[RMDB]
RNA sequence: GGGAACGACUCGAGUAGAGUCGAAAACGUCUCUCCAGUCCUCCGCUCAUGAGGGUUGGGUCCGAGGCGUCGACCAAAAUGAGCUAGCAAUCGGGUGGUGUUCUGGUCGCCCCGGCGCGAAAAUAUACAGAAUAGCGUUAUAGUAUCCCUGUUCCGACCUAAACACCAUGUUCGCAUGGUGUUUAGGAAAAGAAACAACAACAACAAC
Reactivity to 2A3 in 0.01 (KOAc 150mM, MgCl2 10mM, bicine 150mM(pH8.5), 24C), signal-to-noise 1, nucleotides 027 to 156: c000g000u000c000u000c010u000c000c000a010g000u000c000c010u020c010c020g090c050u140c120a070u220g000a010g010g000g030u000u000g000g000g000u090c130c130g000a000g000g000c000g030u010c000g010a010c010c010a070a010a000a200u090g000a030g020c040u020a020g000c080a130a220u090c100g060g000g000u050g080g030u010g020u100u030c060u080g000g030u040c000g000c000c010c000c010g020g000c040g000c000g090a100a050a000a000u270a010u070a060c040a030g120a130a080u120a110g020c040g000u050u080a100u010a160g070u060a040u050c020c010c030u010g020u020u000c020c020g020a010